[RMDB]
RNA sequence: GGGAACGACUCGAGUAGAGUCGAAAAUGAGCUCACUCUUUAUUCUUUUUCUCGUUUUCUUAUACCUAGUAUUUUUUCUGACGCUUUUUGAAGUGACAGAACAAAGGAGUUUAAAUUAGAUUUGCAAUGAUAAGUCAUAAUUCGUUAUGACUUAUCAAAAAGAAACAACAACAACAAC
Reactivity to DMS in 0.01 (KOAc 150mM, MgCl2 10mM, bicine 150mM(pH8.5), 24C), signal-to-noise 5, nucleotides 027 to 126: u020g000a080g010c130u010c100a070c040u000c030u000u000u020a080u020u000c010u000u010u000u000u000c000u000c020g000u010u000u010u010c030u010u010a090u010a100c030c030u000a100g010u010a000u000u010u010u010u000u000c010u010g010a090c000g010c000u000u010u010u030u040g000a030a020g030u000g010a110c000a010g000a000a020c190a020a030a030g000g000a130g010u000u010u020a040a050a080u020u010a070g000a130u010u010u010g010c160a070a130
Reactivity to 2A3 in 0.01 (KOAc 150mM, MgCl2 10mM, bicine 150mM(pH8.5), 24C), signal-to-noise 9, nucleotides 027 to 126: u110g010a010g030c030u020c020a060c010u020c030u060u100u090a130u110u130c040u050u080u030u080u020c020u010c010g050u020u040u080u030c040u070u130a100u050a170c000c010u030a070g110u070a300u040u090u010u020u000u000c000u010g030a040c000g030c010u080u110u040u090u270g230a020a000g000u000g010a020c000a000g010a010a000c020a030a070a010g080g020a090g020u130u150u120a050a110a090u080u080a030g080a130u060u080u160g070c050a050a050